An RNA of 177 nucleotides, treated with DMS and read out base by base. High DMS reactivity at an A or C suggests that its Watson-Crick edge is free. The RNA was probed in 150 mM KOAc, 10 mM MgCl2 and 150 mM bicine (pH 8.5) at 24 C. The DMS profile rests on 2,354 reads.
RNA sequence: GGGAACGACUCGAGUAGAGUCGAAAAGAUAUGGAACAUGCGGGUGAUCACUAGGGAGCGAACGUGAGUACUCGGAAACGAGUACUCUCGCAUCGAUCUAGUGAGUCACCCGCAUGUUCCUAAGUCACCAAUACAUUUCCUUCGGGAAAUGUAUUGGAAAAGAAACAACAACAACAAC
Reactivity to DMS in 0.01 (KOAc 150mM, MgCl2 10mM, bicine 150mM(pH8.5), 24C), signal-to-noise 2, nucleotides 027 to 126: g020a040u010a300u010g010g020a040a010c000a010u030g000c010g020g000g020u000g010a090u010c000a010c010u000a010g010g010g010a120g010c020g010a040a110c040g010u010g010a040g020u000a010c000u000c000g000g000a080a090a170c000g020a010g010u000a000c000u000c000u000c020g010c110a150u000c020g000a210u010c010u000a000g020u010g000a040g010u000c000a010c000c000c000g000c020a000u000g010u000u000c000c000u000a000a050g010u000c040a300